[RMDB]
RNA sequence: GGGAACGACUCGAGUAGAGUCGAAAACCAAUGGGAAACCAUUGGCAACUCGGAAACGAGUUGAACUCGGAAUUAGAUAUGAAACGAGCGACAAUGCGAUUUUAAGCAUUGUCGAUUACGCCCAUGUCGAUUUUAAGACAUGGAGCGAACAUAUCAAGGAACGAUGACCGUUCGCGGUCGUUGUUCCAAAAGAAACAACAACAACAAC
Reactivity to 2A3 in 0.01 (KOAc 150mM, MgCl2 10mM, bicine 150mM(pH8.5), 24C), signal-to-noise 6, nucleotides 027 to 156: c000c000a000a000u000g000g000g010a030a030a020c000c000a000u000u000g010g000c000a000a000c000u000c000g010g030a080a040a020c010g000a000g000u000u000g000a030a020c010u000c010g000g010a070a010u080u020a070g000a010u010a000u010g040a060a050a030c030g000a000g020c000g000a000c000a000a000u000g000c020g080a140u000u070u060u300a100a020g000c000a000u000u000g000u000c000g000a000u000u000a010c000g000c000c000c000a000u000g000u000c000g010a060u040u070u090u300a100a030g000a000c000a000u010g010g000a040g010c000g000a010a000c010a000u010a000u010c040a070a170
Reactivity to DMS in 0.01 (KOAc 150mM, MgCl2 10mM, bicine 150mM(pH8.5), 24C), signal-to-noise 4, nucleotides 027 to 156: c010c000a000a030u010g000g000g000a220a150a250c000c000a020u010u010g020g010c000a040a040c010u020c010g020g000a160a140a280c020g000a040g020u010u020g000a050a300c050u000c040g000g000a140a130u000u000a140g000a050u010a020u000g000a070a080a080c090g000a010g000c000g000a050c000a020a020u010g020c020g000a260u000u000u020u010a150a300g010c010a010u000u000g020u000c000g000a030u000u000a030c000g040c000c000c000a020u010g010u000c010g010a240u010u010u000u010a040a240g000a010c010a010u010g010g010a090g030c010g000a060a200c010a000u000a050u000c000a180a280